[RMDB]
RNA sequence: GGGAACGACUCGAGUAGAGUCGAAAAUAUGGUGCUGACCAAAAGUGCGUCCGAUACGCUGUAUCAAUACUUUGGUCAGCAUGGGGAUAAAGUGGUGCAGCCGCUGGUGCAAAAGCUGGAUAAGCAGCGUAUCUUGCACGUUCGCGUGCAAGAUACGAAAAGAAACAACAACAACAAC
Reactivity to 2A3 in 0.01 (KOAc 150mM, MgCl2 10mM, bicine 150mM(pH8.5), 24C), signal-to-noise 1, nucleotides 027 to 126: u250a120u090g080g000u010g010c000u000g020a000c000c000a050a000a070a050g060u050g040c050g100u050c110c070g070a020u040a050c240g070c300u290g000u020a020u050c010a090a040u040a110c000u040u030u000g000g010u000c000a000g000c000a000u000g010g000g000g010a020u080a080a270a060g000u070g030g040u080g040c030a000g020c000c030g070c070u050g030g030u080g000c020a030a070a050a010g020c010u030g050g030a120u060a140a070g030c030a000g030
Reactivity to DMS in 0.01 (KOAc 150mM, MgCl2 10mM, bicine 150mM(pH8.5), 24C), signal-to-noise 3, nucleotides 027 to 126: u000a070u010g010g040u000g000c010u020g010a000c000c010a000a010a030a070g040u000g030c300g000u010c220c160g000a060u000a010c030g010c150u020g030u000a020u000c060a150a110u000a030c030u000u010u000g000g010u000c010a010g010c000a000u000g010g000g000g010a150u010a040a060a030g020u000g000g010u010g010c070a090g000c040c030g010c010u000g000g000u000g000c080a030a040a080a120g010c010u020g000g010a110u020a110a130g020c050a050g020
Structure probing data (2A3 and DMS) for a 177-nucleotide construct. Conditions: 150 mM KOAc, 10 mM MgCl2 and 150 mM bicine (pH 8.5), 24 C. The DMS profile rests on 2,981 reads. Reactivities are rounded to 0.1 and cut off at 0 and 3. For DMS the reverse transcriptase was MarathonRT.